[RMDB]
RNA sequence: GGGAACGACUCGAGUAGAGUCGAAAAUAUCAAUAAAUCAACGUUUUUCAACUUAUGAAAUGCUUGAUUUUCAUUAAAAAUGAUAUAUUUCCCUACCACAAAUCCCUGUCAAGAUGAUGCUUGACAGUAUACUACGCACCUUCGGGUGCGUAGUAUAAAAAGAAACAACAACAACAAC
Reactivity to DMS in 0.01 (KOAc 150mM, MgCl2 10mM, bicine 150mM(pH8.5), 24C), signal-to-noise 2, nucleotides 027 to 126: u000a000u000c000a150a090u060a050a000a000u000c000a000a000c140g000u000u000u000u000u000c000a040a260c260u100u040a090u030g000a000a020a020u000g000c050u000u000g020a020u000u000u000u040c140a160u010u080a020a130a110a070a140u030g000a000u000a000u010a070u020u000u000c000c000c000u000a130c230c160a080c190a010a040a100u070c110c060c010u000g020u000c000a020a000g000a150u010g010a080u000g040c000u000u020g000a000c000a010g030
Reactivity to 2A3 in 0.01 (KOAc 150mM, MgCl2 10mM, bicine 150mM(pH8.5), 24C), signal-to-noise 2, nucleotides 027 to 126: u010a000u000c010a020a000u030a060a020a000u000c000a010a030c090g010u000u050u000u000u000c040a080a090c080u230u120a130u300g000a000a000a000u000g010c000u000u010g010a000u020u010u010u040c080a060u040u210a030a060a160a130a090u050g000a010u010a020u000a070u020u030u010c010c000c000u000a100c080c040a100c060a110a060a030u120c050c020c000u000g000u010c000a000a000g000a020u260g060a030u120g180c040u000u000g010a000c000a000g000